RNA sequence: GGGAACGACUCGAGUAGAGUCGAAAACUCCACGCUGGGUAAUGGACGACGGCGGCGUGUGGCGAACAGGGAUACCGGUAGUCAGUGUCUGGACCAUCCCAAGGGGCGGCGGAGCUAGCACCCCGACAAAACGGGCACAAGUUCGCUUGUGCCCGAACAUACUAUAAUGCUUCGGCAUUAUAGUAUGAAAAGAAACAACAACAACAAC
Reactivity to DMS in 0.01 (KOAc 150mM, MgCl2 10mM, bicine 150mM(pH8.5), 24C), signal-to-noise 2, nucleotides 027 to 156: c020u000c000c020a030c050g020c000u000g020g010g030u000a070a130u000g030g000a050c000g020a070c080g040g010c120g020g020c030g060u020g030u010g010g030c030g020a120a170c030a100g000g000g000a160u000a050c050c010g020g070u010a080g030u010c030a130g010u020g020u000c030u000g000g010a050c040c020a080u000c010c010c030a100a110g000g010g020g030c000g050g000c060g010g000a120g030c000u000a060g020c030a030c020c010c010c020g010a140c100a030a030a120a150c020g010g020g020c000a020c010a010a060g010u000u010c300g000c040u000u010g000u000g000c050c010c020g000a000a020
Reactivity to 2A3 in 0.01 (KOAc 150mM, MgCl2 10mM, bicine 150mM(pH8.5), 24C), signal-to-noise 4, nucleotides 027 to 156: c010u030c020c010a030c050g040c040u080g000g030g030u160a140a130u110g050g020a050c030g000a010c030g040g060c000g010g010c020g010u130g030u050g040g010c070g020a080a060c080a130g020g020g020a030u060a130c030c020g040g030u060a040g080u060c040a020g020u020g040u080c050u070g030g030a050c020c030a040u020c010c010c020a050a070g020g020g000g000c050g010g000c050g040g050a070g050c030u020a020g000c010a050c010c000c000c000g010a000c060a010a100a060a030c000g000g010g010c000a000c000a000a000g020u030u090c170g000c120u000u010g000u000g000c000c010c000g000a000a000